Notes: This 207-nucleotide RNA was probed chemically with 2A3 and DMS. For DMS the reverse transcriptase was MarathonRT. Reactivities are rounded to 0.1 and cut off at 0 and 3.

[RMDB]
RNA sequence: GGGAACGACUCGAGUAGAGUCGAAAAGGGGUCGGAGGGAGGAUCCGAAGGGACAACAGCUACACUGAAGCCUCCACGGUGUAGACAUGUCCUUUUUGGAUCCAUCGAUCUCCGACGGAGGCACCCAAAUCAAGCUCUUGAUUCGUCAAGAGCUUGACUUAUGGUGACAGUUCGCUGUCACCAUAAGAAAAGAAACAACAACAACAAC
Reactivity to 2A3 in 0.01 (KOAc 150mM, MgCl2 10mM, bicine 150mM(pH8.5), 24C), signal-to-noise 5, nucleotides 027 to 156: g030g030g120g030u010c000g000g000a010g000g000g000a020g000g010a000u000c000c000g010a000a000g040g010g000a010c030a120a020c040a300g000c000u000a000c000a000c000u030g050a110a020g010c000c000u010c010c000a000c010g010g010u000g010u010a000g050a010c060a230u300g010u060c000c020u020u010u010u060u280g010g000a000u000c000c000a020u100c010g000a000u000c000u000c000c000g000a000c000g000g000a000g000g000c000a020c010c010c000a010a080a020u030c000a000a000g000c000u000c000u000u010g020a030u050u120c250g070u010c110a000a000g000a000g000c010u000u000g000a000
Reactivity to DMS in 0.01 (KOAc 150mM, MgCl2 10mM, bicine 150mM(pH8.5), 24C), signal-to-noise 1, nucleotides 027 to 156: g030g030g030g020u000c000g010g000a030g010g010g050a050g030g000a000u000c000c000g000a040a040g000g000g000a040c010a080a110c110a130g000c000u000a020c010a050c000u000g000a020a140g020c000c000u000c020c030a230c040g010g000u000g030u020a020g000a070c040a210u000g000u000c000c010u000u000u000u000u000g080g000a010u000c040c000a080u000c110g010a090u010c010u000c000c040g000a030c010g000g000a030g130g020c010a110c040c040c050a060a120a190u000c010a000a030g010c000u000c000u000u000g020a050u000u000c300g010u010c000a000a010g010a000g030c000u000u010g000a020
For 2A3, 6,641 sequencing reads were counted. It was measured as part of the RMDB library RNAMAK.